The record gives the reactivity of an RNA of 207 nucleotides to DMS and 2A3. DMS adducts were read by reverse transcription with MarathonRT. Source: RMDB library RNAMAK, as collected in RNAgym. Reactivities are rounded to 0.1 and cut off at 0 and 3. For 2A3 the reverse transcriptase was SuperScript II with manganese. Reactivities are given for positions 27 through 156. The RNA was probed in 150 mM KOAc, 10 mM MgCl2 and 150 mM bicine (pH 8.5) at 24 C.
RNA sequence: GGGAACGACUCGAGUAGAGUCGAAAACUACCGUUCGCGGUAGCAACUUCCUAAGUCAUCAUCAAUGACGGCACCCGUGGUGGGAGUCGGAAACGACAUCGAUCACCACCCGUGCUAAGACAGAUGAUGAUAUGGAGAACAAGAGGUUCGCCUCUAACUAUUUUAUCGGAUUCGUCCGAUAAAAUAGAAAAGAAACAACAACAACAAC
Reactivity to DMS in 0.01 (KOAc 150mM, MgCl2 10mM, bicine 150mM(pH8.5), 24C), signal-to-noise 2, nucleotides 027 to 156: c000u000a010c010c010g040u000u000c300g010c040g030g010u000a000g020c030a110a070c070u010u000c010c010u010a080a200g000u010c000a050u000c010a020u010c030a200a100u020g000a120c100g010g010c000a020c020c010c030g020u000g000g020u010g010g000g000a140g040u000c010g030g000a090a060a180c020g010a040c010a170u020c140g000a130u000c010a030c000c010a010c010c010c080g000u000g020c030u000a030a120g020a220c080a060g020a010u000g010a020u010g010a030u010a100u010g000g000a070g010a030a060c050a140a120g020a170g000g020u000u020c080g000c000c010u000c010u000a050a300
Reactivity to 2A3 in 0.01 (KOAc 150mM, MgCl2 10mM, bicine 150mM(pH8.5), 24C), signal-to-noise 8, nucleotides 027 to 156: c000u010a000c010c000g010u060u090c300g010c020g120g010u020a000g010c020a030a120c040u120u070c000c000u030a130a060g010u000c000a000u000c000a000u000c010a050a300u140g040a070c040g020g000c000a010c000c050c040g020u050g000g010u000g000g040g010a040g010u000c000g020g050a080a090a040c020g030a020c030a220u200c060g120a080u080c020a010c020c000a000c000c010c010g000u010g000c000u030a060a020g090a080c050a030g010a010u000g000a000u000g000a000u000a020u070g030g010a060g030a090a080c100a240a020g010a020g050g040u070u080c170g120c060c000u000c010u020a050a060